[RMDB]
RNA sequence: GGGAACGACUCGAGUAGAGUCGAAAAAGUACACUGAUAUUGAUGUUAAUUCAGCUUUGAAUAUAUGUUUUGACAUACGCGAUAAUUGUUCAUUGGAGAAGUUCAUGUCUACUCCCAAUGCCAUCUUACAGCCGGACCUUCGGGUCCGGCAAAAGAAACAACAACAACAAC
Reactivity to 2A3 in 0.01 (KOAc 150mM, MgCl2 10mM, bicine 150mM(pH8.5), 24C), signal-to-noise 2, nucleotides 027 to 129: a000g100u010a010c070a020c030u030g060a040u010a050u300u220g030a010u190g010u100u040a000a000u000u000c000a080g000c040u000u090u080g000a200a000u070a000u010a000u240g070u050u050u080u000g020a000c040a000u140a000c090g000c000g130a010u000a030a000u050u120g000u060u050c000a010u000u110g150g000a160g000a220a090g190u060u180c080a000u100g010u070c000u040a000c000u030c000c000c000a000a000u000g000c000c000a000u000c000u000u140a020c100a000